[RMDB]
RNA sequence: GGGAACGACUCGAGUAGAGUCGAAAAGGACUGGACCAGGACCACAGGUACCGCCGGACCCAUAUAAGGUACCAACCAGAAUAAGACAGAUACAUAAUGGGCAGCACAUUGUAGCCAGUCAGAACCGCGUGCCUAGUCUACGGCACGAGCGAGCUAAGUGGUAAAUUAGUUUCGACUAAUUUACCACAAAAGAAACAACAACAACAAC
Reactivity to DMS in 0.01 (KOAc 150mM, MgCl2 10mM, bicine 150mM(pH8.5), 24C), signal-to-noise 1, nucleotides 027 to 156: g010g020a180c050u000g000g070a160c060c030a110g000g020a170c020c040a110c080a080g000g000u020a040c010c070g060c100c040g000g030a110c020c040c000a090u030a120u010a160a110g000g010u000a010c030c000a070a120c100c040a230g000a050a060u000a040a110g000a080c050a110g000a070u000a040c080a130u000a090a060u010g000g020g020c030a160g000c040a060c080a090u010u010g000u010a040g000c050c020a010g020u010c040a060g000a060a050c000c010g010c000g020u010g000c010c060u000a270g010u010c100u000a110c190g020g030c010a010c010g000a000g030c040g010a140g000c000u000a020a140
Reactivity to 2A3 in 0.01 (KOAc 150mM, MgCl2 10mM, bicine 150mM(pH8.5), 24C), signal-to-noise 2, nucleotides 027 to 156: g150g000a030c030u080g010g060a030c040c060a100g050g000a030c060c040a040c040a070g000g000u060a100c010c030g030c010c000g060g040a090c020c020c000a010u100a020u060a040a030g000g000u040a010c000c010a050a030c010c050a010g050a180a100u150a120a000g080a040c060a060g110a070u060a090c010a030u190a080a020u130g000g010g000c020a040g000c020a010c020a160u090u040g040u020a000g030c000c000a000g030u010c010a000g030a100a000c030c000g000c000g010u000g000c000c000u020a070g060u090c030u060a020c040g000g000c010a010c000g000a070g030c030g010a050g050c010u060a180a000
Structure probing data (DMS and 2A3) for a 207-nucleotide construct. The RNA was probed in 150 mM KOAc, 10 mM MgCl2 and 150 mM bicine (pH 8.5) at 24 C. The data come from the RNA Mapping Database (RMDB), library OK3TST. For DMS the reverse transcriptase was MarathonRT.